[RMDB]
RNA sequence: GGGAACGACUCGAGUAGAGUCGAAAAUACGUCCGAAACCCCCAAAUGAGGAAGAACAGCUCAAAUCUAAGCUCUCGUCAGCUCAGAUUUUCAUGUAUGAGCAGAUCAAGCGCAACCAAGGCAAAACGUAAGCAGGCGAAUUCGUUCGCCUGCUUACAAAAGAAACAACAACAACAAC
Reactivity to 2A3 in 0.01 (KOAc 150mM, MgCl2 10mM, bicine 150mM(pH8.5), 24C), signal-to-noise 1, nucleotides 027 to 126: u080a000c000g070u040c000c000g120a100a060a060c000c000c000c000c000a040a040a040u260g000a170g170g000a050a120g000a050a010c000a010g000c060u050c060a050a000a000u170c040u040a070a000g000c000u000c020u000c070g300u130c030a000g000c000u000c000a000g010a000u000u000u150u000c070a040u220g040u130a010u020g090a000g000c000a000g000a000u090c050a000a050g040c000g050c110a000a020c000c010a000a000g200g020c000a000a000a090a000c000